[RMDB]
RNA sequence: GGGAACGACUCGAGUAGAGUCGAAAACAGAUAGUUCGCUAUCUGAAAAAGGGGUCGACCCGAUGAAAGACAUGCGUUCAUACUGAAGCCUCCACGGUAUGACGCAACAGCUGGAGGGUCGACGGAGGCACCCAAAAAACUGACGUUCGCGUCAGAACGUUUGAGUUGUGUUCGCACAACUCAAACGAAAAGAAACAACAACAACAAC
Reactivity to 2A3 in 0.01 (KOAc 150mM, MgCl2 10mM, bicine 150mM(pH8.5), 24C), signal-to-noise 1, nucleotides 027 to 156: c000a010g010a010u000a000g000u090u150c210g000c090u000a000u000c000u020g160a140a000a000a000a000g190g020g030g010u000c020g000a010c070c000c000g010a020u230g060a110a260a040g210a130c130a130u120g000c000g070u120u220c030a000u040a000c000u010g010a000a090g010c000c000u010c010c010a000c000g000g000u000a000u020g000a010c000g010c000a060a060c040a030g130c010u080g000g120a070g000g010g000u000c000g000a000c000g000g000a000g000g000c010a020c000c040c000a060a080a020a020a000a020c010u010g030a000c000g060u050u040c300g030c020g210u030c000a000g020a060a040
The record gives the reactivity of an RNA of 207 nucleotides to 2A3. The reactions ran in a buffer of 150 mM KOAc, 10 mM MgCl2 and 150 mM bicine (pH 8.5), at 24 C. For 2A3, 704 sequencing reads were counted.